[RMDB]
RNA sequence: GGGAACGACUCGAGUAGAGUCGAAAAGCACCCCACAGUGCUUGCUAUCGCGGCAAUAUCGCCAGUGGUGCUGUCGUGAUGCGGUCUUCGCAUGGACCGCACAAUGAAGAUACGGUGCUUCUGUAUCUAGGUCACUUAAGUUCGCUUAAGUGACCUAAAAAGAAACAACAACAACAAC
Reactivity to DMS in 0.01 (KOAc 150mM, MgCl2 10mM, bicine 150mM(pH8.5), 24C), signal-to-noise 5, nucleotides 027 to 126: g000c020a070c030c020c020c150a080c180a100g010u010g010c010u010u020g010c080u010a050u010c070g010c030g000g010c040a050a050u010a050u000c060g000c060c160a130g010u030g010g020u000g000c030u010g000u000c020g000u010g010a060u010g010c010g000g000u010c010u010u010c250g020c200a100u030g000g000a010c010c000g000c010a040c200a060a060u020g020a090a080g010a010u000a010c040g000g000u020g010c160u020u020c020u000g010u010a020u000c030
Reactivity to 2A3 in 0.01 (KOAc 150mM, MgCl2 10mM, bicine 150mM(pH8.5), 24C), signal-to-noise 8, nucleotides 027 to 126: g020c000a040c000c010c000c000a030c010a030g020u020g010c010u150u160g020c020u060a060u250c060g010c010g040g000c010a060a100u090a050u220c050g010c060c040a070g030u080g110g000u010g000c010u000g010u030c030g050u070g050a130u050g000c000g000g010u010c000u080u140c120g090c180a140u280g020g000a000c000c000g060c000a010c000a010a110u220g060a060a020g010a010u020a020c010g020g020u070g050c000u120u050c020u020g020u000a020u010c020
Structure probing data (DMS and 2A3) for a 177-nucleotide construct. For DMS the reverse transcriptase was MarathonRT. The RNA was probed in 150 mM KOAc, 10 mM MgCl2 and 150 mM bicine (pH 8.5) at 24 C.